Structure probing data (DMS) for a 177-nucleotide construct. Reactivities are given for positions 27 through 126. Source: RMDB library TTRINS, as collected in RNAgym. Conditions: 150 mM KOAc, 10 mM MgCl2 and 150 mM bicine (pH 8.5), 24 C.
[RMDB]
RNA sequence: GGGAACGACUCGAGUAGAGUCGAAAAGAUAUGGACGUCUACGAAUCGAAAAUAAUGAACGUAGUUCGUAUUCGGAAACGAAUAUACGAAGCGUUCAUUAUUUUCGAUUCGUAGAACGUCCUAAGUCCUCCAUUAAGAAGUUCGCUUCUUAAUGGAGAAAAGAAACAACAACAACAAC
Reactivity to DMS in 0.01 (KOAc 150mM, MgCl2 10mM, bicine 150mM(pH8.5), 24C), signal-to-noise 3, nucleotides 027 to 126: g010a120u010a300u010g000g010a010c000g020u000c000u000a000c000g000a020a000u000c010g000a020a010a020a010u000a000a000u000g000a010a010c000g020u000a130g020u000u000c010g020u000a030u000u000c010g000g000a150a120a230c000g000a020a050u010a120u010a040c030g010a020a090g000c000g000u000u000c000a000u000u000a000u000u000u000u010c000g000a000u000u000c010g000u000a010g010a030a020c000g010u000c000c000u000a020a090g000u000c060